[RMDB]
RNA sequence: GGGAACGACUCGAGUAGAGUCGAAAAGAUAUGGAGUGGUAAGGGAGGUGAGAGUGUCGGAAACGACAUGGUACCUUUGAUCUUACGUAACAUCUCCUAAGUCAAAACCCUCAGUUCGCUGAGGGAACAUGUGCACACUGUUCGCAGUGUGCACAUGAAAAGAAACAACAACAACAAC
Reactivity to DMS in 0.01 (KOAc 150mM, MgCl2 10mM, bicine 150mM(pH8.5), 24C), signal-to-noise 3, nucleotides 027 to 126: g010a010u000a080u020g000g000a020g030u010g020g000u000a010a010g000g000g010a000g030g010u000g010a150g000a200g030u000g000u010c010g030g000a040a040a050c010g010a000c000a000u000g000g010u000a010c000c010u000u000u010g010a020u010c000u000u000a000c000g030u010a100a210c190a110u000c010u000c000c000u000a020a120g010u000c010a130a060a090a120c010c000c000u000c000a010g010u010u000c270g000c010u000g000a010g010g000g010a020a060
Reactivity to 2A3 in 0.01 (KOAc 150mM, MgCl2 10mM, bicine 150mM(pH8.5), 24C), signal-to-noise 3, nucleotides 027 to 126: g020a000u010a010u060g010g000a010g040u170g050g010u100a010a000g010g000g010a030g010g010u040g030a210g020a020g060u010g000u000c010g000g010a030a020a000c000g020a000c000a010u070g060g070u170a020c000c000u230u230u070g010a000u000c000u000u010a020c020g060u080a150a050c040a220u130c010u000c000c010u000a030a000g000u030c040a010a030a100a300c010c010c000u000c010a030g020u040u100c190g000c170u010g000a000g010g000g010a000a020